[RMDB]
RNA sequence: GGGAACGACUCGAGUAGAGUCGAAAAUGAGAAUGACUAUAUCCUUGUUAACAGGAGGUGGGAGCAGGGCACGGUAGCUCACACCUGUAAUCUUGGCACUUUAGGAGGCUGAGGCGGGCCGAUCACCGACCACUGUGUUGUUCGCAACACAGUGGUCAAAAGAAACAACAACAACAAC
Reactivity to 2A3 in 0.01 (KOAc 150mM, MgCl2 10mM, bicine 150mM(pH8.5), 24C), signal-to-noise 2, nucleotides 027 to 126: u210g020a050g100a110a100u160g000a070c060u090a050u010a010u300c000c000u000u010g070u090u170a060a010c040a060g040g050a020g090g000u010g000g050g010a000g010c010a040g020g060g050c090a010c110g080g060u140a050g000c000u000c030a000c000a030c000c000u070g020u060a040a060u020c030u080u010g030g000c030a020c020u050u020u060a100g030g020a090g000g030c020u020g010a010g030g060c010g000g040g000c000c010g010a010u040c030a000c020c060
Reactivity to DMS in 0.01 (KOAc 150mM, MgCl2 10mM, bicine 150mM(pH8.5), 24C), signal-to-noise 1, nucleotides 027 to 126: u040g010a090g020a060a060u000g000a040c150u000a050u020a110u000c000c010u000u000g050u050u010a070a120c230a090g000g000a070g050g010u000g000g020g000a050g000c050a070g020g070g040c030a050c100g060g000u020a050g040c040u020c020a010c000a010c000c020u000g000u010a010a120u030c040u010u000g040g010c030a000c030u000u000u000a040g000g000a020g000g000c010u000g000a160g000g020c000g020g000g000c110c030g020a030u000c000a020c080c010
Structure probing data (2A3 and DMS) for a 177-nucleotide construct. The 2A3 profile rests on 1,264 reads. For DMS, 1,533 sequencing reads were counted. The reactions ran in a buffer of 150 mM KOAc, 10 mM MgCl2 and 150 mM bicine (pH 8.5), at 24 C.